RNA sequence: GGGAACGACUCGAGUAGAGUCGAAAACAGAACGGAGCUUCGGCUCCGUUCUGGUGACAAAUAUGAAGCGAUUUAUUGCAAUUAGUUUCGACCUAAUCUUAGGUGAAAUUCACCCAUAUUUUCCAUGCUCGAUGGUUCUUAUUCGUAAGAACCAUAAGAGGACCUAUAACUUCGGUUAUAGGUCCUCAAAAGAAACAACAACAACAAC
Reactivity to 2A3 in 0.01 (KOAc 150mM, MgCl2 10mM, bicine 150mM(pH8.5), 24C), signal-to-noise 2, nucleotides 027 to 156: c000a000g000a020a000c000g000g020a010g010c010u120u110c170g090g000c000u090c000c000g000u000u000c000u000g010g000u010g000a030c020a000a030a010u150a060u080g020a040a090g080c020g030a030u090u250u110a080u210u170g010c040a040a050u100u010a070g030u010u070u030c090g040a040c000c000u090a130a140u190c090u170u080a010g000g010u010g030a050a090a040u140u100c020a040c020c000c000a060u080a060u040u020u030u010c020c060a070u220g050c030u050c060g000a010u070g000g000u010u000c010u000u020a030u030u050c070g020u050a000a000g000a000a000c000c000a010u000a000a000